This 177-nucleotide RNA was probed chemically with 2A3 and DMS. DMS adducts were read by reverse transcription with MarathonRT. Source: RMDB library RFM100, as collected in RNAgym. In probing experiments dimethyl sulfate is read out at A N1 and C N3, which are open when not base-paired. The DMS profile rests on 5,064 reads. For 2A3, 2,550 sequencing reads were counted. The RNA was probed in 150 mM KOAc, 10 mM MgCl2 and 150 mM bicine (pH 8.5) at 24 C.
[RMDB]
RNA sequence: GGGAACGACUCGAGUAGAGUCGAAAAGUGUCGCGUGGAAGGCGCGUGCGAGCCGAGAGUGAGUGGGAGCGCGAAUGUGUGGCUUGAGUGUGCGGGCGUGGGGCGUGCAAGGCGAGCGCGUGUGCCCACUAAGCGCCUACUUCGGUAGGCGCUUAGUAAAAGAAACAACAACAACAAC
Reactivity to 2A3 in 0.01 (KOAc 150mM, MgCl2 10mM, bicine 150mM(pH8.5), 24C), signal-to-noise 4, nucleotides 027 to 126: g120u100g040u090c050g000c010g030u060g020g090a180a040g100g010c030g010c020g030u030g010c020g000a020g010c000c020g050a050g000a010g070u050g020a020g020u080g020g060g010a040g040c070g000c040g040a100a130u140g040u030g020u050g070g010c000u060u070g040a030g100u120g010u050g040c030g000g040g030c030g010u060g010g020g000g010c020g000u030g000c030a060a020g040g000c020g030a040g000c000g000c020g000u030g030u060g040c000c010c000
Reactivity to DMS in 0.01 (KOAc 150mM, MgCl2 10mM, bicine 150mM(pH8.5), 24C), signal-to-noise 2, nucleotides 027 to 126: g010u000g000u010c020g040c060g000u000g010g010a140a070g000g000c000g020c000g040u020g000c030g020a230g000c020c020g020a100g010a110g020u030g050a100g020u010g040g000g010a100g010c050g020c080g010a050a050u030g000u010g000u030g010g000c060u020u020g000a100g000u000g000u010g010c050g010g020g010c140g040u020g000g000g000g000c000g020u000g040c030a070a120g000g000c060g020a140g000c020g020c020g020u000g010u010g010c010c000c030